[RMDB]
RNA sequence: GGGAACGACUCGAGUAGAGUCGAAAAAUAGAUGCUGGCUACGCAUAUGCACAACGCAUGGAUGACACUGGAGUCCUCAUGCAGUACUUUGGGGGAGCAGGCAGCCUACAGUCGCCCAAUGUGUGGGAUCAUUGAUCCGUUUCGACGGAUCAAUGAUAAAAGAAACAACAACAACAAC
Reactivity to DMS in 0.01 (KOAc 150mM, MgCl2 10mM, bicine 150mM(pH8.5), 24C), signal-to-noise 4, nucleotides 027 to 126: a110u000a100g000a090u000g010c020u010g000g010c030u000a050c090g000c040a040u000a040u000g030c080a050c120a070a060c150g010c020a030u010g000g000a040u010g010a060c060a090c130u020g020g000a150g000u000c020c070u010c050a040u000g000c010a070g030u000a040c050u010u010u010g020g000g020g000g010a100g020c050a030g000g010c030a060g010c030c000u000a020c060a080g010u010c070g010c000c020c020a110a070u000g020u000g020u010g010g000g000
Reactivity to 2A3 in 0.01 (KOAc 150mM, MgCl2 10mM, bicine 150mM(pH8.5), 24C), signal-to-noise 2, nucleotides 027 to 126: a000u120a040g080a030u040g010c030u040g020g020c030u070a020c060g020c070a040u040a060u270g020c040a040c030a070a170c120g010c020a020u040g050g070a040u100g010a000c030a020c140u180g130g080a050g040u000c010c010u030c010a010u050g020c020a000g020u070a050c030u040u120u060g040g010g000g000g000a020g010c010a000g000g010c000a010g020c000c000u060a020c020a040g060u090c050g020c020c020c000a010a030u120g050u030g010u020g060g020g010
The data come from the RNA Mapping Database (RMDB), library OK2TST. This 177-nucleotide RNA was probed chemically with DMS and 2A3. Values are in units of 0.01, from 0 to 300, in steps of 10. For DMS the reverse transcriptase was MarathonRT. For DMS, 3,999 sequencing reads were counted. The RNA was probed in 150 mM KOAc, 10 mM MgCl2 and 150 mM bicine (pH 8.5) at 24 C.